Source: RMDB library TTRDES, as collected in RNAgym. This 177-nucleotide RNA was probed chemically with DMS and 2A3. The reactions ran in a buffer of 150 mM KOAc, 10 mM MgCl2 and 150 mM bicine (pH 8.5), at 24 C. For DMS the reverse transcriptase was MarathonRT. Reactivities are given for positions 27 through 126.
RNA sequence: GGGAACGACUCGAGUAGAGUCGAAAAGAUAUGGAUCAUGUGUGGAGCUCGUACUCGGAAACGAGUACAGAGCUAUGAAGCAUUUGAUCCUAAGUCAAACUGCCGAAAUGUUCGCAUUUCGGCAGAACGAGUCCAUAGACUUCGGUCUAUGGACUCGAAAAGAAACAACAACAACAAC
Reactivity to DMS in 0.01 (KOAc 150mM, MgCl2 10mM, bicine 150mM(pH8.5), 24C), signal-to-noise 2, nucleotides 027 to 126: g010a010u000a060u010g000g010a010u000c000a010u000g010u010g020u000g010g020a020g040c000u000c000g000u010a010c000u000c020g010g010a010a010a050c000g000a060g010u000a010c030a030g000a010g040c000u000a140u010g000a220a300g000c000a010u010u000u000g030a000u000c000c010u000a000a110g010u000c010a100a180a190c010u000g000c000c000g010a020a020a010u000g010u010u010c300g020c000a000u000u000u010c020g000g000c030a000g000a020a100
Reactivity to 2A3 in 0.01 (KOAc 150mM, MgCl2 10mM, bicine 150mM(pH8.5), 24C), signal-to-noise 1, nucleotides 027 to 126: g020a010u040a000u050g000g000a010u000c000a010u020g000u000g010u010g050g070a030g010c000u010c000g000u010a000c020u000c000g000g000a020a010a000c000g000a000g030u000a000c020a000g020a010g000c010u040a200u070g000a000a000g010c000a010u000u000u110g000a000u000c010c000u000a000a010g000u000c000a000a070a200c010u010g000c000c000g020a000a020a010u050g010u100u180c300g000c200a000u010u000u010c000g000g000c000a000g010a000a000